[RMDB]
RNA sequence: GGGAACGACUCGAGUAGAGUCGAAAACUCGAAUCUUUCGAGAUUCGAGACUCUCGAAGUGUCAAUAAGAUCGAAAAGAUCGCCCAGCAUAAAAUAGACACAAUGCUGCUUGAUUCGUCAAGCAGAAUGUAGCAAAUUCGUUCGCGAAUUUGCUACAAAAAGAAACAACAACAACAAC
Reactivity to 2A3 in 0.01 (KOAc 150mM, MgCl2 10mM, bicine 150mM(pH8.5), 24C), signal-to-noise 1, nucleotides 027 to 126: c010u010c010g000a020a010u010c050u000u170u200c260g090a030g000a030u030u000c000g010a020g000a030c000u010c000u000c030g050a230a040g010u010g040u040c010a050a030u140a200a050g000a030u020c010g060a080a170a130a260g000a000u040c000g000c050c020c000a040g090c000a020u170a230a110a080a020u070a040g040a040c000a000c060a130a100u140g050c000u030g010c010u030u020g010a040u040u020c160g070u000c060a010a010g020c000a000g020a030a010
Reactivity to DMS in 0.01 (KOAc 150mM, MgCl2 10mM, bicine 150mM(pH8.5), 24C), signal-to-noise 1, nucleotides 027 to 126: c010u010c000g000a000a000u000c000u020u000u020c180g020a030g020a010u040u000c000g010a030g000a030c070u020c020u000c020g010a190a180g020u010g000u010c000a050a090u020a070a080g020a010u000c000g000a100a040a190a140g000a010u000c010g040c120c020c140a090g000c120a100u000a050a100a140a060u000a060g020a020c070a000c060a080a130u020g020c000u000g000c000u000u000g000a030u000u020c240g020u000c000a010a010g000c000a000g000a070a030